[RMDB]
RNA sequence: GGGAACGACUCGAGUAGAGUCGAAAAGAUAUGGAAAUCACGAGCUGAGUAUCGGAAACGAUACUAGCGAUGAGUAUUUCCUAAGUCAAAAGAGUAAUCUCCUGAGUUCGCUCAGGAGAUUACUCAAGAGACAGUUGAGGUUCGCCUCAACUGUCUCAAAAGAAACAACAACAACAAC
Reactivity to DMS in 0.01 (KOAc 150mM, MgCl2 10mM, bicine 150mM(pH8.5), 24C), signal-to-noise 1, nucleotides 027 to 126: g010a040u000a300u000g000g010a020a000a030u000c090a160c030g010a200g000c000u020g000a020g030u010a010u000c000g000g000a120a030a290c000g010a010u000a010c000u010a040g010c000g010a100u000g000a170g010u010a070u000u000u000c000c000u000a030a050g010u000c030a050a070a130a170g000a000g000u000a000a030u000c000u000c000c000u000g010a020g000u000u010c300g060c010u000c000a010g000g000a010g000a010u000u000a000c000u000c010a040a070